[RMDB]
This 177-nucleotide RNA was probed chemically with DMS and 2A3.
RNA sequence: GGGAACGACUCGAGUAGAGUCGAAAAGAAAAUCUGUUUCGUGCUGCCCAAUGCCUGUAGCACGUUGUUGCUCUCCAGCAAUGUUUACGCAAAUACCGGCGUUCAAUCCGUUUGCCUUUAAGCCUACGAUGCUUAUUCAGUUCGCUGAAUAAGCAUCAAAAGAAACAACAACAACAAC
Reactivity to DMS in 0.01 (KOAc 150mM, MgCl2 10mM, bicine 150mM(pH8.5), 24C), signal-to-noise 4, nucleotides 027 to 126: g010a150a050a110a110u010c100u010g000u000u010u000c030g010u010g030c020u000g000c020c050c070a120a100u000g030c040c060u000g020u000a040g000c080a040c040g000u000u000g010u010u010g010c050u010c080u000c100c040a070g000c030a060a030u000g010u000u000u010a030c090g010c040a030a070a110u000a080c090c070g030g000c050g020u000u010c090a080a110u010c050c040g000u000u010u010g000c030c030u000u000u000a060a110g010c030c030u010a080c220
Reactivity to 2A3 in 0.01 (KOAc 150mM, MgCl2 10mM, bicine 150mM(pH8.5), 24C), signal-to-noise 2, nucleotides 027 to 126: g030a000a100a030a060u060c090u070g090u020u090u080c020g020u040g030c020u000g050c000c050c000a030a050u100g000c000c010u020g000u010a010g030c060a000c010g000u040u060g010u000u020g000c030u020c020u000c060c020a000g000c000a010a020u090g050u070u080u110a030c020g030c020a000a070a070u110a070c040c040g030g050c000g000u010u050c020a050a060u000c000c010g030u040u060u080g000c000c000u040u110u090a040a030g040c010c000u010a040c080
For 2A3 the reverse transcriptase was SuperScript II with manganese.